[RMDB]
RNA sequence: GGGAACGACUCGAGUAGAGUCGAAAAUUGCAUUGCACAGCGAUAGUAUGGAUGGGACAUUGGUAUUUACAGUACUAAUGCAAAUACUGUAUUUUUCUAUAUAGUGCGCAAUAUGUAGGAAUUUGCACCCAGUAGUAAUAUUCGUAUUACUACUGGGAAAAGAAACAACAACAACAAC
Reactivity to 2A3 in 0.01 (KOAc 150mM, MgCl2 10mM, bicine 150mM(pH8.5), 24C), signal-to-noise 9, nucleotides 027 to 126: u050u040g000c020a030u040u200g020c020a020c020a040g040c030g060a030u030a030g040u020a030u060g050g040a050u040g030g030g100a050c010a010u010u020g000g000u020a060u060u170u080a090c080a020g020u000a010c010u020a010a020u020g010c020a010a080a040u150a140c010u020g010u020a040u010u080u010u020u000c030u010a080u010a040u040a130g050u050g040c040g000c030a020a040u040a060u160g060u070a040g040g070a080a110u060u060u130g030c020a050
Reactivity to DMS in 0.01 (KOAc 150mM, MgCl2 10mM, bicine 150mM(pH8.5), 24C), signal-to-noise 9, nucleotides 027 to 126: u010u010g010c020a090u020u020g010c020a040c060a110g020c130g010a040u010a040g010u000a030u000g010g010a100u010g010g010g020a150c020a020u000u000g000g010u000a010u000u010u050a110c280a150g010u000a020c030u000a020a020u000g000c040a090a060a060u010a050c040u010g010u000a010u000u000u010u000u000c010u000a070u010a080u010a070g000u010g010c050g010c060a050a060u010a030u010g010u000a030g000g000a040a060u000u000u000g010c130a150